[RMDB]
RNA sequence: GGGAACGACUCGAGUAGAGUCGAAAAACGCUCGACUGGUCAACCCGGCUACCGGAGAACAUGCUGGCGGUCGCCCGCACCAUUAAGGGCGGUAACGGCUAUAUGCGCAUGAUGCCGGGGAUCGUGAAGGACAAGGACGUGGCGGGCGUCUCUCGCGUCAUAUUAGGUUCUUCGGAACCUAAUAUGAAAAAGAAACAACAACAACAAC
Reactivity to 2A3 in 0.01 (KOAc 150mM, MgCl2 10mM, bicine 150mM(pH8.5), 24C), signal-to-noise 6, nucleotides 027 to 156: a000c010g010c050u050c010g070a110c050u140g080g010u030c030a080a110c030c000c010g000g010c070u150a160c080c080g170g030a130g030a150a030c010a000u000g000c020u090g200g040c070g020g000u000c010g000c010c010c010g000c030a300c070c000a100u300u240a220a240g000g000g010c020g000g000u040a060a020c010g010g000c000u050a030u050a030u300g090c040g010c020a010u020g020a040u100g010c000c000g000g000g000g010a040u110c050g020u060g160a090a070g090g010a050c050a060a050g060g010a020c040g050u050g010g020c020g000g000g000c000g010u000c010u000c000u000c020g070c020g080
Reactivity to DMS in 0.01 (KOAc 150mM, MgCl2 10mM, bicine 150mM(pH8.5), 24C), signal-to-noise 2, nucleotides 027 to 156: a060c040g040c050u020c020g030a040c060u000g000g020u000c020a150a190c060c030c000g010g010c010u000a140c060c020g000g020a150g030a120a140c030a060u000g000c030u000g010g040c050g010g000u000c000g010c040c000c010g020c070a120c030c070a200u000u000a120a120g000g010g010c010g000g000u000a020a050c000g000g010c030u000a080u000a100u010g010c030g040c050a080u000g020a090u010g010c010c020g010g020g000g020a020u010c080g000u000g020a180a140g020g000a150c040a060a120g040g010a110c040g000u000g010g010c040g000g020g020c050g000u010c020u000c000u000c000g030c070g000
The data come from the RNA Mapping Database (RMDB), library OK3TST. The record gives the reactivity of an RNA of 207 nucleotides to 2A3 and DMS. Values cover nucleotides 27 to 156. 2A3 adducts were read by reverse transcription with SuperScript II with manganese. The reactions ran in a buffer of 150 mM KOAc, 10 mM MgCl2 and 150 mM bicine (pH 8.5), at 24 C. For DMS the reverse transcriptase was MarathonRT.